RNA sequence: GGGAACGACUCGAGUAGAGUCGAAAAGAUACUCAUGGAGUGAGAAGCAGUGUUAAUAGGUAUCACAAUGGAUUCACUGAGAUUCUUACCUUGUAUAUAAACAAGAACUUUGCUCCAGAUAACAAGCCAUUUAAUCAUGGUUCGCCAUGAUUAAAUGAAAAGAAACAACAACAACAAC
Reactivity to 2A3 in 0.01 (KOAc 150mM, MgCl2 10mM, bicine 150mM(pH8.5), 24C), signal-to-noise 9, nucleotides 027 to 126: g030a010u110a050c020u030c050a100u050g020g000a020g020u070g020a040g030a040a020g190c040a020g030u020g030u100u070a100a080u090a130g140g070u190a090u220c070a040c070a140a140u210g100g020a050u090u060c010a030c070u040g010a030g040a220u070u020c010u030u060a070c010c000u010u000g070u010a080u020a040u080a170a200a010c020a020a010g040a060a040c040u090u120u170g000c000u000c000c000a010g030a070u120a090a050c090a100a000g070c030
Reactivity to DMS in 0.01 (KOAc 150mM, MgCl2 10mM, bicine 150mM(pH8.5), 24C), signal-to-noise 8, nucleotides 027 to 126: g000a100u020a050c070u010c060a140u020g000g000a020g010u000g000a030g000a060a040g010c060a050g020u000g010u010u040a060a080u020a060g020g010u010a050u020c140a080c200a120a100u040g020g000a080u010u010c000a040c050u000g000a100g010a100u010u000c030u010u000a080c110c000u000u000g000u010a100u040a090u030a090a090a030c010a030a020g000a090a120c130u020u020u010g010c010u000c010c020a040g000a100u020a070a090c210a060a090g010c190